[RMDB]
RNA sequence: GGGAACGACUCGAGUAGAGUCGAAAAGAUAUGGAUGUCAAUAACUAUACGAAUCUGUGAACUACGUUGCUGUGUCGGAAACGACAUUGCAACGCACAGACUAUAUAGUUAUUGACAUCCUAAGUCACUACUAAGGAACCUUCGGGUUCCUUAGUAGAAAAGAAACAACAACAACAAC
Reactivity to 2A3 in 0.01 (KOAc 150mM, MgCl2 10mM, bicine 150mM(pH8.5), 24C), signal-to-noise 2, nucleotides 027 to 126: g050a000u080a030u140g010g010a010u000g000u000c020a030a000u000a020a000c020u010a010u060a160c170g190a140a300u000c020u010g060u010g050a080a130c180u200a060c300g010u000u000g000c020u030g000u000g000u030c020g030g000a050a070a080c030g000a000c010a000u000u040g000c010a000a010c000g000c010a000c000a000g040a000c000u010a000u010a010u000a090g000u000u000a000u010u000g010a000c010a010u000c000c010u000a000a000g010u000c000a000
Reactivity to DMS in 0.01 (KOAc 150mM, MgCl2 10mM, bicine 150mM(pH8.5), 24C), signal-to-noise 3, nucleotides 027 to 126: g020a070u000a300u000g000g000a030u000g010u010c000a030a010u000a000a000c000u000a010u020a030c110g010a090a130u000c000u010g020u000g010a160a080c130u020a300c000g010u000u000g010c000u000g020u000g010u010c000g020g020a110a060a210c000g000a020c000a000u000u000g000c000a000a000c000g000c000a000c000a020g020a040c030u010a230u000a010u010a000g000u000u000a000u000u010g000a010c000a000u000c000c010u000a000a060g010u000c020a270